[RMDB]
RNA sequence: GGGAACGACUCGAGUAGAGUCGAAAAUUUAACGCAUUCCCGUUAAUCGUCUGACUACGCUACUCAUCCUUUCCGCCUCAAAUUAACGUUCGUAAAAUCAGCAAAAAACGAGGAUUUUUCGUUCAUACAUUAUUGUUAAGUUCGCUUAACAAUAAUGAAAAGAAACAACAACAACAAC
Reactivity to 2A3 in 0.01 (KOAc 150mM, MgCl2 10mM, bicine 150mM(pH8.5), 24C), signal-to-noise 7, nucleotides 027 to 126: u010u010u020a030a000c020g010c060a050u070u060c020c020c000g000u020u090a050a050u080c040g070u010c060u050g030a040c010u050a030c090g010c040u020a030c010u020c020a030u030c010c000u000u030u010c010c010g030c000c020u060c020a050a070a040u100u070a100a040c070g000u010u010c000g000u010a010a010a000a030u020c010a010g110c070a080a080a080a070a030a040c090g020a060g070g020a040u030u010u000u010u020c000g010u010u010c010a010u050a140
Reactivity to DMS in 0.01 (KOAc 150mM, MgCl2 10mM, bicine 150mM(pH8.5), 24C), signal-to-noise 8, nucleotides 027 to 126: u010u000u010a070a100c140g010c170a180u000u000c040c040c000g020u010u010a080a050u010c130g000u010c050u000g010a110c050u000a070c090g010c040u000a060c050u000c030a090u000c020c020u000u000u000c030c020g010c050c030u000c080a070a080a080u020u010a080a140c170g010u000u000c030g010u000a020a030a040a050u000c020a040g020c040a000a060a070a070a070a080c160g000a040g010g000a050u000u000u000u000u000c020g010u000u000c030a140u010a120

Background:
The data come from the RNA Mapping Database (RMDB), library RFMREP. The record gives the reactivity of an RNA of 177 nucleotides to 2A3 and DMS. The reactions ran in a buffer of 150 mM KOAc, 10 mM MgCl2 and 150 mM bicine (pH 8.5), at 24 C. For 2A3 the reverse transcriptase was SuperScript II with manganese. Values cover nucleotides 27 to 126.